[RMDB]
The record gives the reactivity of an RNA of 177 nucleotides to DMS.
Source: RMDB library RFMREP, as collected in RNAgym.
RNA sequence: GGGAACGACUCGAGUAGAGUCGAAAAGUGCGACUUCGGUCGCACAAAAAUGGGAAAUUCCCCCUCCUAUAACCCCCCCGCUGGUAUCUCCCCCUCAGACUGGCAAAGCAAUGCGUUCGCGCAUUGCCAACAAGUUAAACUUCGGUUUAACUUGUUGAAAAGAAACAACAACAACAAC
Reactivity to DMS in 0.01 (KOAc 150mM, MgCl2 10mM, bicine 150mM(pH8.5), 24C), signal-to-noise 4, nucleotides 027 to 126: g030u000g010c010g000a020c000u000u020c200g030g010u010c000g020c000a000c000a000a030a050a120a060u010g010g000g000a050a110a180u010u010c000c010c000c220c190u000c010c010u000a060u010a120a270c030c000c000c000c000c000c030g010c010u010g000g010u000a050u010c100u010c010c010c010c000c000u010c040a070g000a050c040u000g010g010c030a070a070a130g000c000a000a000u000g010c000g030u000u010c220g020c010g010c000a000u000u000g000c000